[RMDB]
RNA sequence: GGGAACGACUCGAGUAGAGUCGAAAAUUCCCCACGACUUUCCAGCAAUUUUUCUACACGUGAAAAGUGCUCUGGUGCACUUAUCAAUUGUGUCAUCAGUUUUGAAGCUAAGUUUGGAGUCGAGGGACGUCCCUGAUAUAUUCGUAUAUCAGGGACGAAAAGAAACAACAACAACAAC
Reactivity to DMS in 0.01 (KOAc 150mM, MgCl2 10mM, bicine 150mM(pH8.5), 24C), signal-to-noise 4, nucleotides 027 to 126: u010u000c010c000c010c050a180c030g000a020c000u010u040u030c000c010a070g010c050a080a060u010u000u000u000u010c060u010a100c060a050c090g030u000g000a050a100a040a050g030u020g020c090u010c210u040g010g030u030g010c000a000c000u000u010a130u000c190a100a040u020u030g010u010g000u010c090a040u030c060a020g010u020u020u020u020g000a070a050g010c130u010a050a200g000u010u020u020g020g000a050g010u000c020g000a190g010g010g010a200
Reactivity to 2A3 in 0.01 (KOAc 150mM, MgCl2 10mM, bicine 150mM(pH8.5), 24C), signal-to-noise 9, nucleotides 027 to 126: u030u010c020c000c000c010a070c010g010a000c010u130u160u040c010c010a010g020c030a130a140u030u030u010u050u030c030u100a090c100a060c160g130u130g080a060a050a010a030g060u040g010c010u000c040u110g080g000u060g010c000a010c000u060u130a170u230c100a140a180u130u110g000u010g120u100c020a040u020c020a050g060u040u070u190u260g140a080a020g020c040u060a100a070g070u060u120u070g010g000a000g000u000c000g010a110g020g030g030a020